Structure probing data (DMS) for a 177-nucleotide construct.
Source: RMDB library TTRINS, as collected in RNAgym.
The RNA was probed in 150 mM KOAc, 10 mM MgCl2 and 150 mM bicine (pH 8.5) at 24 C.
For DMS, 1,607 sequencing reads were counted.

RNA sequence: GGGAACGACUCGAGUAGAGUCGAAAAGAUAUGGAUGCACUCGUAGCUGUGUCAGCGUCGAUAAGCUUGUAUCGGAAACGAUAUAAAGCUUUUGACGACGUUACAGCUACGAGUGCAUCCUAAGUCAGUUAAAUUGAUGCUUCGGCAUCAAUUUAACAAAAGAAACAACAACAACAAC
Reactivity to DMS in 0.01 (KOAc 150mM, MgCl2 10mM, bicine 150mM(pH8.5), 24C), signal-to-noise 1, nucleotides 027 to 126: g000a050u000a300u000g010g010a000u010g010c000a020c000u000c000g030u000a000g010c000u000g000u000g000u020c150a110g000c010g010u000c000g000a020u000a030a010g020c000u000u000g000u000a010u000c000g000g000a150a080a220c020g010a000u010a010u010a080a010a020g010c010u000u000u000u000g000a090c010g000a030c040g040u000u010a010c000a000g020c010u000a000c000g010a000g010u010g000c020a010u000c000c020u000a010a090g010u000c090a140